[RMDB]
RNA sequence: GGGAACGACUCGAGUAGAGUCGAAAAGAACCGCGAUUCGUCGCGGUUCGAGCGCCGUAGCGCGCAACGGCGUAACGGCAGCAUUAGCGCCCAGCUGCCGACGAUCGGGUGGUUUCGACCACCCGAACAUACAAUUUAGAUUCGUCUAAAUUGUAUGAAAAGAAACAACAACAACAAC
Reactivity to DMS in 0.01 (KOAc 150mM, MgCl2 10mM, bicine 150mM(pH8.5), 24C), signal-to-noise 9, nucleotides 027 to 126: g000a000a000c000c000g020c000g010a030u000u010c180g030u000c000g030c000g010g000u000u000c000g000a090g010c010g010c000c010g010u000a070g010c070g010c090g010c040a080a020c020g000g000c000g020u000a060a130c020g010g000c000a010g010c010a130u010u010a100g010c140g010c000c000c010a170g000c000u000g000c010c000g020a090c260g000a110u000c000g000g000g020u000g000g010u000u000u010c180g010a040c000c000a010c000c000c000g000a000a050
Reactivity to 2A3 in 0.01 (KOAc 150mM, MgCl2 10mM, bicine 150mM(pH8.5), 24C), signal-to-noise 3, nucleotides 027 to 126: g000a000a000c000c000g000c000g010a020u030u070c190g020u010c000g130c000g000g000u000u000c000g010a000g000c000g000c000c010g010u040a040g080c070g000c020g000c110a020a010c000g010g010c010g010u030a140a060c010g030g000c010a000g000c010a060u070u230a080g090c040g070c060c000c000a010g000c000u000g000c040c010g010a090c060g020a070u050c010g000g000g010u010g000g020u030u080u130c200g070a030c000c000a000c000c010c000g000a000a000